[RMDB]
Chemical mapping of a 177-nucleotide RNA with DMS and 2A3. Conditions: 150 mM KOAc, 10 mM MgCl2 and 150 mM bicine (pH 8.5), 24 C. Source: RMDB libraries RFM100 and RFMREP, as collected in RNAgym.
RNA sequence: GGGAACGACUCGAGUAGAGUCGAAAAGACCGCGAGGUGGAGCUAAUCUCAUAAAACCGUUCUCAGUUCGGAUUGUAGGCUGCAACUCGCCUACAUGAAGCUGGAAUCGCUAGUAAUCGCGGAUCAGCGUGGGGAUGUAAUUCGUUACAUCCCCACGAAAAGAAACAACAACAACAAC
Reactivity to DMS in 0.01 (KOAc 150mM, MgCl2 10mM, bicine 150mM(pH8.5), 24C), signal-to-noise 5, nucleotides 027 to 126: g000a050c010c010g000c010g020a020g010g010u010g020g020a070g000c170u020a120a110u020c030u040c080a100u010a060a080a100a100c210c060g000u000u000c000u020c010a020g000u020u030c050g000g000a120u000u000g000u000a000g010g020c000u010g020c180a160a140c240u030c210g000c000c000u000a010c000a000u000g000a300a110g000c000u000g000g010a020a010u010c120g020c060u010a060g020u000a120a120u000c020g010c000g000g010a080u000c050a090g010
Reactivity to 2A3 in 0.01 (KOAc 150mM, MgCl2 10mM, bicine 150mM(pH8.5), 24C), signal-to-noise 7, nucleotides 027 to 126: g040a010c000c010g000c000g000a000g000g020u040g000g010a000g000c030u030a030a040u040c010u010c040a070u270a140a140a190a300c010c010g000u020u000c200u020c000a090g030u270u250c000g000g000a010u000u020g000u010a010g010g000c020u080g030c070a070a120c030u060c160g000c000c000u000a000c000a000u010g010a010a010g000c000u000g000g000a000a010u020c040g000c030u030a030g070u130a200a050u030c010g000c030g030g030a220u050c020a010g070